[RMDB]
Structure probing data (DMS) for a 177-nucleotide construct.
For DMS, 852 sequencing reads were counted.
The RNA was probed in 150 mM KOAc, 10 mM MgCl2 and 150 mM bicine (pH 8.5) at 24 C.

RNA sequence: GGGAACGACUCGAGUAGAGUCGAAAACCGGUGCCCGCCCGCGGGGCACGCUGGGAGCUGAAGUCCCGCCCCGCCAGGCCCUCCGGGAGGUGCGACCCCGCCGCGAGGCACGCUGGGAGUCGUAGUCACGUCCCUUGUUGUUCGCAACAAGGGACGUAAAAGAAACAACAACAACAAC
Reactivity to DMS in 0.01 (KOAc 150mM, MgCl2 10mM, bicine 150mM(pH8.5), 24C), signal-to-noise 1, nucleotides 027 to 126: c020c000g020g020u010g030c040c000c030g000c000c050c240g020c060g010g030g010g070c040a020c110g010c060u010g030g000g020a020g010c080u010g010a200a230g000u000c010c010c010g000c020c000c000c030g000c020c070a130g010g000c040c050c040u020c070c070g000g010g020a080g000g000u000g020c000g010a220c000c020c010c030g010c010c150g000c030g020a150g000g000c010a040c010g040c100u010g020g010g000a040g010u000c000g010u000a060g000u000c050
Values cover nucleotides 27 to 126.